Background
An RNA of 177 nucleotides, treated with 2A3 and DMS and read out base by base. The RNA was probed in 150 mM KOAc, 10 mM MgCl2 and 150 mM bicine (pH 8.5) at 24 C. It was measured as part of the RMDB library VIROID. Values cover nucleotides 27 to 126. The 2A3 profile rests on 1,324 reads.
[RMDB]
RNA sequence: GGGAACGACUCGAGUAGAGUCGAAAAUGACAGAGUGGUAUCAGAGCCGACUUGCUGCAUGUUUCAAUACCCAUCUGACUAAACACGCACUCCAAGGUUAAGAGUCCAUAUACCGCCUUGUGUCUUGGUACCUACAUCUCUUCGGAGAUGUAGGUACAAAAGAAACAACAACAACAAC
Reactivity to 2A3 in 0.01 (KOAc 150mM, MgCl2 10mM, bicine 150mM(pH8.5), 24C), signal-to-noise 2, nucleotides 027 to 126: u110g010a000c030a030g030a000g060u050g040g010u050a030u120c050a090g040a030g140c060c070g000a060c080u040u060g040c020u040g040c000a060u060g050u080u120u040c080a070a050u180a170c000c010c000a050u040c020u020g070a080c040u130a000a070a000c060a010c060g030c040a030c040u070c040c050a040a070g040g020u080u060a080a000g030a040g080u000c050c000a050u070a000u010a140c020c000g020c030c020u040u050g030u000g020u030c010u020u000g010
Reactivity to DMS in 0.01 (KOAc 150mM, MgCl2 10mM, bicine 150mM(pH8.5), 24C), signal-to-noise 2, nucleotides 027 to 126: u010g010a120c030a070g000a070g000u000g000g010u000a030u000c160a120g010a090g020c060c020g010a130c120u000u000g010c100u000g030c050a040u000g000u000u000u000c060a050a040u000a090c080c030c040a120u000c050u010g010a100c150u030a040a070a040c110a040c110g010c090a030c070u000c060c020a040a150g000g000u030u010a040a080g000a110g000u000c010c020a070u000a080u000a090c000c050g030c030c040u000u000g010u010g010u000c030u000u000g000